[RMDB]
An RNA of 177 nucleotides, treated with 2A3 and DMS and read out base by base. Conditions: 150 mM KOAc, 10 mM MgCl2 and 150 mM bicine (pH 8.5), 24 C. Reactivities are given for positions 27 through 126. For DMS the reverse transcriptase was MarathonRT. The DMS profile rests on 105,056 reads. The data come from the RNA Mapping Database (RMDB), library OK1LIB.
RNA sequence: GGGAACGACUCGAGUAGAGUCGAAAACGGGUGUUUGUCUGAAUGCUCUAUACCUAGUGAAACAGGUUUUCAUGGCGCAUCGACUACGUGCCUGUCUCGGCUACGAUCAGCCGGGGUGCAUGUGCCAAGUGUGUGGUCCUUUCGAGGAUCACGCGCUAAAAGAAACAACAACAACAAC
Reactivity to 2A3 in 0.01 (KOAc 150mM, MgCl2 10mM, bicine 150mM(pH8.5), 24C), signal-to-noise 9, nucleotides 027 to 126: c020g010g010g000u030g030u030u070u050g230u080c120u160g060a080a020u040g010c000u000c010u030a070u050a100c000c010u040a080g100u040g270a090a060a030c060a050g020g020u020u020u080u090c060a050u070g010g000c000g000c010a020u020c050g070a050c040u090a040c060g050u070g010c000c010u030g010u010c010u000c000g000g000c010u050a050c100g190a150u120c090a010g000c000c000g000g000g000g000u030g000c020a020u020g010u020g020c000c000a020
Reactivity to DMS in 0.01 (KOAc 150mM, MgCl2 10mM, bicine 150mM(pH8.5), 24C), signal-to-noise 9, nucleotides 027 to 126: c120g000g000g010u000g000u010u010u010g010u020c100u020g010a050a040u010g000c040u000c020u010a080u020a080c010c010u000a060g010u010g010a100a100a110c120a040g000g000u010u020u020u020c100a070u010g010g010c030g000c010a020u010c060g010a090c090u020a090c060g010u010g010c020c080u010g010u010c020u000c000g000g000c000u000a090c280g010a120u030c170a030g010c000c000g000g000g000g010u010g000c060a020u000g000u000g010c020c020a080